The record gives the reactivity of an RNA of 177 nucleotides to DMS and 2A3.
Values cover nucleotides 27 to 126.
Conditions: 150 mM KOAc, 10 mM MgCl2 and 150 mM bicine (pH 8.5), 24 C.
[RMDB]
RNA sequence: GGGAACGACUCGAGUAGAGUCGAAAAGUGAGUUACCGGUUCAAUAUUCCAGACAGACUCGUGGUUCAUUUGAGCGUCCAUGCUCGCCCUGAACUCCGGGCACACGAUAGGUGAUAUCGCUCACCCAUAAUAGCGGUCAUUUCGAUGACCGCUAUUAAAAAGAAACAACAACAACAAC
Reactivity to DMS in 0.01 (KOAc 150mM, MgCl2 10mM, bicine 150mM(pH8.5), 24C), signal-to-noise 2, nucleotides 027 to 126: g030u000g020a100g000u000u000a000c010c010g010g030u010u000c070a120a040u010a160u020u010c080c100a100g000a120c140a150g000a120c010u010c020g000u010g000g010u000u010c030a050u000u010u010g010a010g010c000g000u030c170c240a130u010g000c030u000c020g020c130c120c120u000g000a020a020c020u000c140c020g010g000g030c030a100c100a080c140g000a060u000a070g000g020u000g010a030u000a090u000c030g000c030u010c100a080c000c000c010a120
Reactivity to 2A3 in 0.01 (KOAc 150mM, MgCl2 10mM, bicine 150mM(pH8.5), 24C), signal-to-noise 2, nucleotides 027 to 126: g010u010g010a010g010u000u010a050c020c030g110g110u040u060c050a040a080u060a160u300u090c090c040a050g030a060c020a070g090a110c030u020c040g050u010g000g000u020u000c030a050u010u080u300g010a000g000c000g050u020c120c030a050u220g000c020u030c020g030c000c010c020u030g010a030a010c000u000c020c030g000g000g000c020a020c000a010c030g060a050u060a070g000g000u040g020a030u050a140u090c020g000c000u000c010a120c000c000c000a000